[RMDB]
Conditions: 150 mM KOAc, 10 mM MgCl2 and 150 mM bicine (pH 8.5), 24 C. Chemical mapping of a 207-nucleotide RNA with 2A3. For 2A3, 422 sequencing reads were counted. For 2A3 the reverse transcriptase was SuperScript II with manganese. The data come from the RNA Mapping Database (RMDB), library ARCHII.
RNA sequence: GGGAACGACUCGAGUAGAGUCGAAAAGUAACAAGGUUUCCGUAGAAAGUACGAACGAAUUUAAUGAUUCUUCUGCGGUUGAAACUUAUCGAAGCCUUAGUAGCCUGAAAGGUGCUUUGCGCGACUAUAAACAAUGACGAAGCUUAAAUGCUAGUGACGUAUGUCCAGGGUUCGCCCUGGACAUACGAAAAGAAACAACAACAACAAC
Reactivity to 2A3 in 0.01 (KOAc 150mM, MgCl2 10mM, bicine 150mM(pH8.5), 24C), signal-to-noise 1, nucleotides 027 to 156: g080u070a040a070c030a020a050g000g020u030u020u000c050c000g000u000a000g010a010a070a000g000u240a100c030g010a000a000c040g010a010a010u140u050u190a250a220u260g130a040u100u040c020u000u010c030u000g000c020g030g000u000u010g000a090a000a000c030u050u000a000u270c000g070a070a000g020c030c000u120u000a000g020u080a050g240c000c000u100g190a130a100a190g080g000u000g000c000u130u000u060g000c220g020c000g000a040c120u030a010u070a080a110a080c030a000a010u040g040a090c070g020a130a000g000c000u100u190a130a080a000u070g000c000u100a000g010u010g090a020